RNA sequence: GGGAACGACUCGAGUAGAGUCGAAAAGAAGGCGAUGAGCAUGAGCAUGCAAGAGGAGGACAGACGCAGGUUCCCUCUGGACCCCUGUGCAGUCUCAUGGGCUGAGUACCUCGAGACCUUUGCCUUCUCUUACUAAAUCAUUCGUGAUUUAGUAAGAAAAAGAAACAACAACAACAAC
Reactivity to 2A3 in 0.01 (KOAc 150mM, MgCl2 10mM, bicine 150mM(pH8.5), 24C), signal-to-noise 8, nucleotides 027 to 126: g020a000a000g020g010c010g030a030u050g040a040g040c020a030u090g020a010g010c060a030u070g000c010a050a050g030a050g300g010a070g010g010a020c010a010g020a020c120g060c280a050g100g080u020u020c010c020c000u010c000u010g170g040a270c010c000c000c020u020g040u030g020c010a010g020u010c000u000c010a020u070g010g030g000c030u060g030a020g060u110a080c000c020u030c030g030a040g020a040c010c000u020u030u040g010c000c000u030u010c010
Reactivity to DMS in 0.01 (KOAc 150mM, MgCl2 10mM, bicine 150mM(pH8.5), 24C), signal-to-noise 9, nucleotides 027 to 126: g000a030a020g010g010c010g010a050u000g010a230g010c020a060u000g000a060g010c090a120u000g010c010a030a070g010a030g010g010a050g000g000a180c010a020g000a040c240g010c230a120g010g010u000u000c010c000c010u000c010u000g000g000a090c010c010c010c010u000g010u000g000c010a040g000u000c000u000c000a040u000g010g000g010c040u010g010a150g010u010a080c040c020u000c190g010a100g000a080c040c030u000u000u000g010c010c010u000u000c020